Chemical mapping of a 207-nucleotide RNA with DMS and 2A3.

RNA sequence: GGGAACGACUCGAGUAGAGUCGAAAAUACUUAGUACGCGCGUAGUUGCAGGCAUUCCGGGUGCAGCAACUGACGCGGAAGACUUUUCCCAGAGUGUGCGCUUCAACUGGCGUGCUGAGUAGUGAACGAAUUGCACGUACGUUCGCGUACGUGCAAAUUAGUUGAAUUAUUUCGAUAAUUCAACUAAAAAAGAAACAACAACAACAAC
Reactivity to DMS in 0.01 (KOAc 150mM, MgCl2 10mM, bicine 150mM(pH8.5), 24C), signal-to-noise 4, nucleotides 027 to 156: u000a030c040u000u000a060g020u000a070c010g020c020g020c020g040u010a040g030u000u000g020c010a130g010g000c010a050u000u000c010c300g000g040g120u000g000c020a300g000c010a030a040c010u000g000a030c020g020c010g010g000a060a110g010a110c090u000u010u000u000c030c000c000a200g000a130g020u000g020u000g010c040g000c020u000u010c040a130a170c140u010g020g010c010g030u000g020c010u000g010a080g010u000a090g030u010g000a110a140c070g000a110a190u000u000g000c000a010c000g010u000a000c020g030u000u000c300g040c030g020u000a000c000g000u010g010c010a010a000a040
Reactivity to 2A3 in 0.01 (KOAc 150mM, MgCl2 10mM, bicine 150mM(pH8.5), 24C), signal-to-noise 4, nucleotides 027 to 156: u020a000c010u010u010a000g000u010a010c010g010c000g010c010g040u020a010g010u000u000g000c040a120g120g010c000a020u080u100c120c170g190g060g010u010g010c000a010g000c000a020a030c030u070g150a030c020g010c020g020g000a000a000g120a060c040u170u160u060u000c020c010c010a010g030a050g020u080g010u080g060c120g010c120u100u090c040a100a060c050u040g010g000c010g000u000g000c000u000g000a000g000u030a030g040u050g120a080a010c070g030a100a100u040u010g000c010a000c020g000u000a010c000g000u020u060c220g000c000g080u000a000c000g000u000g000c010a000a000a010
Overview
Source: RMDB library M2RFOK, as collected in RNAgym. For 2A3 the reverse transcriptase was SuperScript II with manganese.